[RMDB]
RNA sequence: GGGAACGACUCGAGUAGAGUCGAAAAGACUACAAAACCAUGCCUCUCUCUUGGAGCGAAUUGGAUGAUCGGGCCGAGGGCAGCGUAGCGCCUCUUCCCCUCACUCUCCUUUCUCCAAUAUGAACCUUGAGUCAUCAAAGGCGAGUCUGUUUAUAGUACGUACCCUUAGGUUCGCCUAAGGGUACGUAAAAGAAACAACAACAACAAC
Reactivity to 2A3 in 0.01 (KOAc 150mM, MgCl2 10mM, bicine 150mM(pH8.5), 24C), signal-to-noise 1, nucleotides 027 to 156: g040a040c020u040a080c190a050a050a030a040c040c030a050u060g000c020c000u020c000u000c000u000c010u010u020g010g020a000g090c020g040a000a040u040u050g000g000a050u140g020a000u140c060g000g000g040c060c040g000a010g000g040g110c010a090g010c070g140u200a110g090c090g240c010c000u110c080u060u090c000c000c000c000u020c020a030c010u050c020u070c010c000u000u000u000c010u010c000c020a000a010u120a120u130g070a020a050c010c000u010u090g030a010g030u020c010a060u040c040a290a000a030g010g000c010g010a000g020u020c020u060g070u020u100u060a110u100a130g140u000